[RMDB]
RNA sequence: GGGAACGACUCGAGUAGAGUCGAAAAGCGGGGAGGAGUGUUACCCCACGGGAACUGCUGAGUGCCCCUGACGUCCAGACCCUCCCCCGUCCGGGAGAAUGGAGAUUCGGGAACGUGAAGCAUGGUGAGACCUUACGGUUCGCCGUAAGGAAAAGAAACAACAACAACAAC
Reactivity to 2A3 in 0.01 (KOAc 150mM, MgCl2 10mM, bicine 150mM(pH8.5), 24C), signal-to-noise 9, nucleotides 027 to 129: g070c050g000g000g000g000a020g020g010a100g020u080g060u060u150a130c000c000c000c010a020c040g000g000g020a060a040c040u070g030c060u120g130a030g060u100g040c010c000c000c000u010g020a030c060g090u020c010c000a000g020a070c010c000c000u010c010c000c000c000c010g090u040c030c020g020g010g010a040g000a040a060u090g010g010a050g020a050u070u070c030g010g000g020a070a050c030g050u080g060a030a000g010c030a040u070g010g040u070g040a060g020a050
Reactivity to DMS in 0.01 (KOAc 150mM, MgCl2 10mM, bicine 150mM(pH8.5), 24C), signal-to-noise 9, nucleotides 027 to 129: g030c130g000g010g000g020a050g010g030a040g040u020g020u000u010a130c020c040c030c040a090c190g000g020g020a110a070c060u020g030c110u020g010a090g020u040g000c060c020c010c020u020g020a050c170g000u010c040c070a040g010a140c140c010c000u000c020c010c020c050c080g020u030c040c110g000g000g000a040g020a050a060u000g000g000a030g010a130u040u020c070g040g010g000a070a050c080g020u050g010a050a050g030c080a030u000g010g000u000g010a080g010a140
The data come from the RNA Mapping Database (RMDB), library 15KLIB. Structure probing data (2A3 and DMS) for a 170-nucleotide construct. Values are in units of 0.01, from 0 to 300, in steps of 10. 2A3 adducts were read by reverse transcription with SuperScript II with manganese. The RNA was probed in 150 mM KOAc, 10 mM MgCl2 and 150 mM bicine (pH 8.5) at 24 C. For DMS the reverse transcriptase was MarathonRT. Reactivities are given for positions 27 through 129.